[RMDB]
RNA sequence: GGGAACGACUCGAGUAGAGUCGAAAAGAUAUGGAUAAGCGGGAGGACCCAGCGAUGCAUCGGAAACGAUGCAGAGCUGCCGAAGAACGCUUAUCCUAAGUCAAAGGGGCAACUUCGGUUGCCCCAACUCCGUGUAGUAGUUCGCUACUACACGGAGAAAAGAAACAACAACAACAAC
Reactivity to DMS in 0.01 (KOAc 150mM, MgCl2 10mM, bicine 150mM(pH8.5), 24C), signal-to-noise 2, nucleotides 027 to 126: g000a060u010a300u020g000g010a000u000a000a040g010c010g000g030g000a210g020g000a210c170c300c020a020g000c010g020a150u010g020c010a000u000c000g000g000a120a060a140c030g020a010u000g000c000a000g000a300g020c010u000g010c050c010g000a060a090g010a290a230c020g010c030u000u000a000u000c010c010u000a010a040g000u000c020a030a090a090g000g000g000g000c020a010a010c010u000u010c190g030g010u000u000g010c000c010c000c000a030a030
Reactivity to 2A3 in 0.01 (KOAc 150mM, MgCl2 10mM, bicine 150mM(pH8.5), 24C), signal-to-noise 1, nucleotides 027 to 126: g030a010u060a040u120g010g000a030u000a000a020g020c020g000g000g030a050g040g030a080c200c240c050a020g020c000g010a000u000g020c000a010u000c000g030g020a040a020a050c020g020a010u010g000c000a000g000a000g000c010u010g060c010c030g110a170a030g040a040a000c000g000c020u000u020a000u000c000c000u000a060a010g040u000c010a000a040a220g000g010g020g000c020a000a020c020u050u120c300g100g000u010u000g010c000c000c020c000a010a000
Background
Chemical mapping of a 177-nucleotide RNA with DMS and 2A3. The RNA was probed in 150 mM KOAc, 10 mM MgCl2 and 150 mM bicine (pH 8.5) at 24 C. 2A3 adducts were read by reverse transcription with SuperScript II with manganese. For DMS, 1,417 sequencing reads were counted.